An RNA of 177 nucleotides, treated with DMS and 2A3 and read out base by base.
DMS (dimethyl sulfate) methylates the pairing face of unpaired adenines and cytosines.
For 2A3 the reverse transcriptase was SuperScript II with manganese.
For DMS the reverse transcriptase was MarathonRT.
It was measured as part of the RMDB library M2PK90.

RNA sequence: GGGAACGACUCGAGUAGAGUCGAAAAAUACAGUACGAAAGUACAAAGAAGCAAUCAAACCGAGCUGUGAAAUGAUGGCUUCAGUCCAAAAUGGGCAAACACUGCAGACGGAGCCAAAGGCAAAUAAUACUAUCGAGCUAUUCGUAGCUCGAUAGUAAAAAGAAACAACAACAACAAC
Reactivity to DMS in 0.01 (KOAc 150mM, MgCl2 10mM, bicine 150mM(pH8.5), 24C), signal-to-noise 2, nucleotides 027 to 126: a060u000a070c110a080g000u000a000c010g000a180a090a150g000u000a090c020a120a090a080g000a080a070g040c020a040a040u020c040a050a090a180c020c130g000a040g050c050u000g060u000g000a060a080a020u010g020a040u000g000g010c000u000u000c010a060g010u000c010c020a030a030a130a100u010g010g030g010c090a080a080a070c050a040c130u000g000c130a050g000a070c010g010g000a150g060c020c030a000a050a090g030g010c090a020a050a080u000a040a130
Reactivity to 2A3 in 0.01 (KOAc 150mM, MgCl2 10mM, bicine 150mM(pH8.5), 24C), signal-to-noise 1, nucleotides 027 to 126: a000u220a020c000a020g010u000a020c000g060a140a070a010g030u010a000c020a010a080a000g040a000a030g070c070a010a040u070c070a100a020a020c020c000g100a070g090c040u010g020u060g160a060a190a100u090g030a020u010g000g000c000u000u000c030a040g020u070c000c060a070a000a050a210u210g010g030g000c020a030a030a000c100a010c090u070g000c010a000g010a080c030g050g010a000g010c000c010a030a000a030g010g000c000a100a000a030u160a010a070